Annotation
An RNA of 207 nucleotides, treated with DMS and 2A3 and read out base by base. For 2A3, 2,535 sequencing reads were counted. Source: RMDB library OK3TST, as collected in RNAgym.
RNA sequence: GGGAACGACUCGAGUAGAGUCGAAAACAUGGUAUGGCCUCGCAUCCGGCCUACCGACAGAAUCAACAACUUUGGAUGCGGUGGGCGAGAGCCCUAAGAAGGAGUCUCCCCGCCUGGGGAGCUCCGUAUGACUUAAUGUAUUACCAGGCGGAUACAAAGUGCAUUUAUCAUUCGUGAUAAAUGCACUAAAAGAAACAACAACAACAAC
Reactivity to DMS in 0.01 (KOAc 150mM, MgCl2 10mM, bicine 150mM(pH8.5), 24C), signal-to-noise 2, nucleotides 027 to 156: c060a120u010g050g010u000a020u000g020g020c000c000u010c060g000c010a050u000c010c060g040g040c000c010u010a040c020c000g000a300c110a150g010a110a140u010c090a150a110c120a070a100c180u000u000u000g030g010a030u000g020c010g050g020u000g020g020g030c050g050a300g000a210g000c000c020c010u000a020a110g000a170a230g010g000a060g000u000c010u000c000c000c000c000g010c130c140u000g010g020g010g000a040g020c000u010c010c020g000u000a010u010g000a090c090u000u000a090a110u000g010u000a070u000u020a060c050c000a090g010g010c020g010g010a130u020a030c050a080a090
Reactivity to 2A3 in 0.01 (KOAc 150mM, MgCl2 10mM, bicine 150mM(pH8.5), 24C), signal-to-noise 4, nucleotides 027 to 156: c030a050u100g010g000u090a130u300g000g000c020c010u090c020g000c000a000u000c000c000g000g000c000c000u000a000c000c000g020a020c030a050g220a070a120u190c050a010a110c020a030a090c070u160u190u120g010g000a010u000g000c010g000g040u050g010g000g000c030g010a050g000a010g070c000c000c000u010a010a030g050a030a040g010g000a000g030u030c000u010c050c000c000c000g000c010c000u010g000g000g000g000a000g010c000u000c000c000g000u010a040u040g060a000c020u050u110a130a040u210g090u180a120u080u150a060c000c000a000g000g000c090g000g010a100u220a150c110a040a170

Conditions: 150 mM KOAc, 10 mM MgCl2 and 150 mM bicine (pH 8.5), 24 C.